[RMDB]
RNA sequence: GGGAACGACUCGAGUAGAGUCGAAAAAAAAGAUAUGGAGUAAAGGGAGAGCUGAGGACCGAAGAACUCGCUCGGAAACGAGCGAGGGAGGUCGCAGGCUCGACGAUCUUUACUCCUAAGUCAAAAAGUAAUAUAACCUCUUCGGAGGUUAUAUUACAAAAGAAACAACAACAACAAC
Reactivity to DMS in 0.01 (KOAc 150mM, MgCl2 10mM, bicine 150mM(pH8.5), 24C), signal-to-noise 2, nucleotides 027 to 126: a130a110a180a070g000a030u000a300u020g000g000a010g020u010a010a000a010g030g020g000a020g000a020g010c010u020g010a300g000g000a010c010c030g010a100a100g020a220a190c010u000c010g040c000u010c000g000g020a100a090a130c010g020a000g000c000g010a000g000g010g000a040g010g030u000c000g010c020a300g000g000c000u000c010g010a040c260g020a040u010c010u000u000u010a010c010u000c000c010u010a030a040g000u010c070a060a040a080a120a110
Structure probing data (DMS) for a 177-nucleotide construct. DMS adducts were read by reverse transcription with MarathonRT. The RNA was probed in 150 mM KOAc, 10 mM MgCl2 and 150 mM bicine (pH 8.5) at 24 C. The data come from the RNA Mapping Database (RMDB), library TTRDES. Values cover nucleotides 27 to 126. For DMS, 1,562 sequencing reads were counted.